[RMDB]
RNA sequence: GGGAACGACUCGAGUAGAGUCGAAAACGACAGGGGCAUUCAUGCUGUCGAGCAAUGUCUCCAGCGAGCUGGCGUUCAUUUUGGUCACCGCAAUAACGGCAAUCAGAUGGAUAAUCAACCAGAUAGAAUCAUCGCAAAAUUUCGAUUUUGCGAUGAUAAAAGAAACAACAACAACAAC
Reactivity to 2A3 in 0.01 (KOAc 150mM, MgCl2 10mM, bicine 150mM(pH8.5), 24C), signal-to-noise 3, nucleotides 027 to 126: c030g030a010c020a080g050g010g030g010c030a030u020u130c020a030u210g020c000u040g100u220c030g000a000g000c030a040a180u100g010u080c010u010c030c010a000g000c030g050a030g020c010u030g020g000c020g030u010u030c030a060u030u140u100u080g040g000u030c010a000c060c010g000c010a030a040u120a130a010c000g010g000c010a010a020u040c010a030g030a090u030g010g000a020u060a090a070u090c020a000a040c000c010a000g010a000u030a040g130a110
Reactivity to DMS in 0.01 (KOAc 150mM, MgCl2 10mM, bicine 150mM(pH8.5), 24C), signal-to-noise 4, nucleotides 027 to 126: c060g030a070c110a080g010g010g000g030c080a100u010u020c130a090u000g000c030u000g010u000c130g010a060g020c030a090a100u000g010u000c010u000c000c040a120g040c060g010a110g020c020u000g000g020c100g010u000u000c020a040u000u000u000u000g000g020u000c060a100c020c040g000c060a080a110u020a080a130c070g000g000c040a080a020u000c020a040g000a050u000g000g000a050u000a110a080u000c120a050a100c030c030a030g000a160u010a100g000a150
Record summary
Chemical mapping of a 177-nucleotide RNA with 2A3 and DMS.